Structure probing data (2A3 and DMS) for a 207-nucleotide construct. High DMS reactivity at an A or C suggests that its Watson-Crick edge is free.

RNA sequence: GGGAACGACUCGAGUAGAGUCGAAAACGCUGGGAUCACUAAGCGAUGCUGCGGUAGCAACAGCUAUCUGAAGCGCGCACGGAUAGACAUGCUAUGGCGAACAGCAGCAUCGCGAUGUGAUCCUGUGCUGAAGCGCGCACGGCAACCGAAAGGUGCGGGAUUUAAAAUUGUUCGCAAUUUUAAAUCCAAAAGAAACAACAACAACAAC
Reactivity to 2A3 in 0.01 (KOAc 150mM, MgCl2 10mM, bicine 150mM(pH8.5), 24C), signal-to-noise 4, nucleotides 027 to 156: c030g000c010u030g000g000g010a000u000c000a000c010u080a220a010g000c000g010a000u000g000c000u000g000c010g090g020u020a000g010c000a020a090c050a120g040c000u000a000u000c000u020g070a220a050g000c010g000c000g000c000a010c010g000g000a000u010a010g020a060c020a040u030g010c010u020a040u120g270g150c170g110a120a030c040a060g000c000a000g000c000a000u000c000g000c000g000a000u000g000u020g000a000u000c000c000u000g000u000g000c000u030g010a120a040g000c000g010c000g000c010a010c020g010g010c000a020a020c000c000g030a100a050a030g000g000u010g010c020g010
Reactivity to DMS in 0.01 (KOAc 150mM, MgCl2 10mM, bicine 150mM(pH8.5), 24C), signal-to-noise 1, nucleotides 027 to 156: c060g000c000u000g020g040g010a020u010c000a010c020u000a300a300g000c000g060a010u000g020c030u000g030c020g000g060u000a060g010c000a050a050c130a200g020c010u020a010u000c010u010g000a080a060g010c000g000c060g050c090a300c000g010g020a010u000a010g000a030c040a300u000g000c010u000a030u000g000g010c110g030a130a100c050a050g000c010a030g010c000a030u000c010g010c000g000a060u000g020u040g010a000u010c010c000u000g010u000g000c030u000g000a080a010g030c040g020c010g020c000a180c000g000g030c000a060a110c010c010g000a100a120a130g000g030u000g010c030g000